Source information: This 207-nucleotide RNA was probed chemically with 2A3. The reactions ran in a buffer of 150 mM KOAc, 10 mM MgCl2 and 150 mM bicine (pH 8.5), at 24 C. Values cover nucleotides 27 to 156. 2A3 adducts were read by reverse transcription with SuperScript II with manganese.
RNA sequence: GGGAACGACUCGAGUAGAGUCGAAAAAAUUCCAGCUCUGCGAGUUUGCUCCCAUAUUGUUGCAGUUAAAACGCCCGUAGUCUGAAUUGGCCAGCAAUGGUCGUACGUAUUUUUACGUUCACUGUGAACAAAUCAGGACGCUUAGAGUAUGGCCACAGUAAAAUAAUUAGUUCGCUAAUUAUUUUACAAAAGAAACAACAACAACAAC
Reactivity to 2A3 in 0.01 (KOAc 150mM, MgCl2 10mM, bicine 150mM(pH8.5), 24C), signal-to-noise 1, nucleotides 027 to 156: a000a000u250u010c040c000a000g000c000u000c000u010g000c000g000a040g040u020u120u120g040c000u010c000c000c000a020u090a050u050u110g000u000u010g050c070a020g000u070u060a070a120a170a050c010g060c030c050c000g100u190a090g080u010c050u060g180a200a170u130u260g020g010c010c000a040g020c070a020a140u020g000g020u050c020g000u010a010c020g060u090a080u010u200u040u060u110a040c040g000u000u130c060a060c080u050g000u200g050a120a010c040a030a060a120u080c010a040g020g030a000c070g020c020u070u050a060g000a010g000u030a060u170g020g000c010c010a000c020a030